[RMDB]
RNA sequence: GGGAACGACUCGAGUAGAGUCGAAAAAAAUGCAUUACAGGGUAAGAUCUCUAUUGGCAGGAAACCAUUACUUAGAUCUUUGCAUCUCUUUAUGCAUUGCUUUUAAUUAGUGAGUUAUCUGCCAAAGCUGAGACAUCUCCUUCGGGAGAUGUCUCAGAAAAGAAACAACAACAACAAC
Reactivity to 2A3 in 0.01 (KOAc 150mM, MgCl2 10mM, bicine 150mM(pH8.5), 24C), signal-to-noise 1, nucleotides 027 to 126: a000a000a000u180g000c010a020u180u150a070c030a040g010g000g080u080a080a020g040a050u070c020u010c040u070a080u060u060g000g000c030a000g020g080a120a000a000c000c000a000u040u000a000c010u040u000a000g000a030u020c000u000u000u040g000c000a050u000c070u000c000u160u210u240a000u000g000c000a000u000u000g040c050u000u030u000u000a000a000u010u000a000g030u000g080a060g120u010u020a050u070c000u000g000c000c000a020a000a030g020